[RMDB]
RNA sequence: GGGAACGACUCGAGUAGAGUCGAAAACGAGAAGAACGCUAGCCGUCCUCCAGUGGAAGAACUGGAAAAGCUCCGGCUUUUCCUUUUUUCUGUUACUGGAACGCGCUGUUGCGCUCGCUUGCCAGACCAUGCUAUAUAUCUUCGGAUAUAUAGCAUGAAAAGAAACAACAACAACAAC
Reactivity to 2A3 in 0.01 (KOAc 150mM, MgCl2 10mM, bicine 150mM(pH8.5), 24C), signal-to-noise 3, nucleotides 027 to 126: c020g000a000g010a060a020g010a040a000c010g000c010u010a010g000c000c000g010u030c010c040u000c010c000a020g000u040g050g010a030a020g010a030a020c100u040g000g000a000a010a010a000g020c040u080c160c300g200g000c060u020u010u010u000c000c000u020u030u000u000u020u000c030u050g080u060u080a020c000u000g000g020a000a010c000g020c010g000c000u040g070u270u030g010c010g010c000u000c000g010c000u020u060g080c000c020a030g010a040c040
Reactivity to DMS in 0.01 (KOAc 150mM, MgCl2 10mM, bicine 150mM(pH8.5), 24C), signal-to-noise 5, nucleotides 027 to 126: c040g000a030g000a050a030g010a070a050c000g000c000u000a020g010c020c000g010u010c100c160u000c010c000a010g020u000g000g000a060a010g010a020a010c180u000g010g010a000a000a000a000g010c010u010c300c260g040g000c000u000u000u000u000c000c000u000u000u010u000u000u000c010u000g000u010u000a070c000u000g000g000a050a020c010g000c190g020c010u000g000u010u000g010c000g020c000u000c150g000c020u000u000g000c020c030a150g010a180c200
An RNA of 177 nucleotides, treated with 2A3 and DMS and read out base by base. Source: RMDB library VIROID, as collected in RNAgym. Values cover nucleotides 27 to 126. The 2A3 profile rests on 6,281 reads.